[RMDB]
RNA sequence: GGGAACGACUCGAGUAGAGUCGAAAAGAAGGUCCCUCAAACGACUGAGCUUCCACGUCAAGCCUCAGCUAUCGAAUGAAAAAUUGCUGGCAAGAUGUAGGCAGUUCAGUUGUAUGCGGAGACCAAAUGGUCCAUGUAAAUUCGUUUACAUGGACCAAAAAGAAACAACAACAACAAC
Reactivity to DMS in 0.01 (KOAc 150mM, MgCl2 10mM, bicine 150mM(pH8.5), 24C), signal-to-noise 5, nucleotides 027 to 126: g000a140a130g020g000u000c010c020c000u000c010a020a080a040c000g000a000c020u000g000a010g010c010u000u020c000c000a040c020g040u000c000a060a300g000c020c020u010c090a020g000c010u000a170u010c080g010a140a160u070g010a070a100a120a160a130u030u000g000c060u020g010g000c010a050a300g000a040u010g010u000a100g030g000c030a030g000u000u000c000a010g030u000u000g020u000a030u000g010c050g000g000a100g020a020c000c010a020a060a050
Reactivity to 2A3 in 0.01 (KOAc 150mM, MgCl2 10mM, bicine 150mM(pH8.5), 24C), signal-to-noise 7, nucleotides 027 to 126: g210a090a040g000g000u000c000c000c000u000c010a080a080a000c000g010a010c000u000g000a000g000c000u010u010c000c000a000c000g010u000c010a010a030g020c000c020u190c140a010g010c000u050a050u100c070g180a170a230u250g100a090a060a020a050a020u080u090g000c010u020g000g000c000a030a030g000a000u000g010u060a170g000g000c010a000g000u000u000c000a000g000u000u000g000u000a010u010g020c030g000g010a130g000a210c000c000a040a010a050

The record gives the reactivity of an RNA of 177 nucleotides to DMS and 2A3. For 2A3 the reverse transcriptase was SuperScript II with manganese.